The data come from the RNA Mapping Database (RMDB), library OK1LIB. Structure probing data (2A3 and DMS) for a 177-nucleotide construct. The reactions ran in a buffer of 150 mM KOAc, 10 mM MgCl2 and 150 mM bicine (pH 8.5), at 24 C. For DMS the reverse transcriptase was MarathonRT. For DMS, 58,959 sequencing reads were counted.
[RMDB]
RNA sequence: GGGAACGACUCGAGUAGAGUCGAAAAUGCGGAGGACAUCUUAUAUGGGGAUAAUGGGUGUGGUAACCUCUUCCAGGACACGGCUUUGUACGUCGUUGACGGAGUCACAAACACCGUAGAAAAUGCCCAACCUAGGAUAUUUCGAUAUCCUAGGUUGAAAAGAAACAACAACAACAAC
Reactivity to 2A3 in 0.01 (KOAc 150mM, MgCl2 10mM, bicine 150mM(pH8.5), 24C), signal-to-noise 9, nucleotides 027 to 126: u110g000c020g020g020a040g030g010a030c020a080u030c050u130u140a130u050a100u300g040g010g010g020a040u060a150a080u170g050g040g010u040g010u020g060g040u070a060a050c000c010u030c000u080u030c030c030a040g010g030a030c020a000c050g010g000c010u070u070u140g060u110a050c080g010u010c040g090u030u070g010a010c010g010g030a040g060u080c030a010c010a090a070a000c050a040c010c010g010u010a030g100a040a100a040a050u160g010c010c010
Reactivity to DMS in 0.01 (KOAc 150mM, MgCl2 10mM, bicine 150mM(pH8.5), 24C), signal-to-noise 9, nucleotides 027 to 126: u030g010c070g000g000a090g000g000a080c070a040u010c070u010u030a100u030a080u020g010g000g000g000a070u020a080a100u030g000g000g010u010g010u010g000g010u010a080a090c080c030u000c070u010u010c050c030a090g010g010a150c130a030c030g000g000c140u010u010u030g010u020a080c190g010u000c030g020u000u020g000a140c070g000g000a070g010u020c090a060c130a060a060a060c100a060c010c000g010u010a070g000a050a060a080a070u020g000c050c030